[RMDB]
RNA sequence: GGGAACGACUCGAGUAGAGUCGAAAAUACGGGUCAAACUUUUGAAUAGUCACUUUAAGACCGCGAUUCUUCAGCAGCCGACCCAAAGAAGCUGCCGUUAUCCCUUUACCCAAGGAGGAAACCACGCAUUUUACGAUGGAUUCGUCCAUCGUAAAAUAAAAGAAACAACAACAACAAC
Reactivity to DMS in 0.01 (KOAc 150mM, MgCl2 10mM, bicine 150mM(pH8.5), 24C), signal-to-noise 5, nucleotides 027 to 126: u040a080c100g020g000g000u010c010a120a110a080c050u010u030u020u020g020a060a110u020a040g000u010c040a050c100u000u010u010a120a100g020a080c130c070g000c050g000a060u010u000c050u010u000c060a070g030c100a060g000c060c230g000a070c040c040c050a030a040a070g000a090a090g010c030u000g000c010c050g000u010u010a100u010c000c010c000u000u000u020a090c050c020c030a090a070g000g020a090g010g010a100a070a070c020c050a070c130g020c140
Reactivity to 2A3 in 0.01 (KOAc 150mM, MgCl2 10mM, bicine 150mM(pH8.5), 24C), signal-to-noise 4, nucleotides 027 to 126: u130a030c020g000g010g010u030c040a080a100a090c060u120u130u120u180g060a070a050u090a080g040u060c020a050c130u110u170u160a170a050g030a030c010c030g080c040g090a050u060u020c020u060u040c030a030g000c020a000g020c040c050g070a100c010c000c030a040a080a000g060a020a010g010c020u030g030c000c010g000u020u040a070u070c000c000c000u010u070u110a120c020c020c020a050a050g060g020a040g010g060a060a020a040c030c010a040c070g070c020
Conditions: 150 mM KOAc, 10 mM MgCl2 and 150 mM bicine (pH 8.5), 24 C. Chemical mapping of a 177-nucleotide RNA with DMS and 2A3. Source: RMDB library OK1LIB, as collected in RNAgym.